[RMDB]
RNA sequence: GGGAACGACUCGAGUAGAGUCGAAAAGAUAUGGACUGUGCCGAGCGAUUCUAAGAUGGAAGUAAGGACUCUCGGAAACGAGAGUCCUUAUGGACUUAAUAUCGCGUUUGACGCACAGUCCUAAGUCCACCUCUAUUUAGUUCGCUAAAUAGAGGUGAAAAGAAACAACAACAACAAC
Reactivity to DMS in 0.01 (KOAc 150mM, MgCl2 10mM, bicine 150mM(pH8.5), 24C), signal-to-noise 8, nucleotides 027 to 126: g010a090u000a300u010g010g000a010c010u000g010u000g010c010c020g000a100g010c010g010a010u010u000c190u000a020a020g020a190u010g010g030a300a270g000u000a000a010g010g010a020c010u000c000u000c000g010g000a090a080a170c000g000a010g010a020g010u000c000c000u000u000a000u000g010g010a220c010u000u000a020a070u000a020u000c010g020c000g020u000u010u000g020a210c300g000c020a010c000a010g010u000c000c010u000a010a080g010u000c050
Reactivity to 2A3 in 0.01 (KOAc 150mM, MgCl2 10mM, bicine 150mM(pH8.5), 24C), signal-to-noise 3, nucleotides 027 to 126: g060a030u110a070u180g020g000a010c000u010g000u000g020c000c000g060a040g000c000g000a010u160u000c060u170a060a040g060a110u300g220g070a100a060g020u000a000a010g000g000a010c000u000c010u000c030g040g010a120a060a020c010g000a000g000a000g000u000c000c010u000u000a010u000g000g000a000c000u000u030a040a010u030a020u120c010g000c000g130u140u240u300g040a040c040g010c000a010c000a000g010u000c000c000u000a000a010g000u000c000

Chemical mapping of a 177-nucleotide RNA with DMS and 2A3. It was measured as part of the RMDB library TTRINS. For 2A3 the reverse transcriptase was SuperScript II with manganese.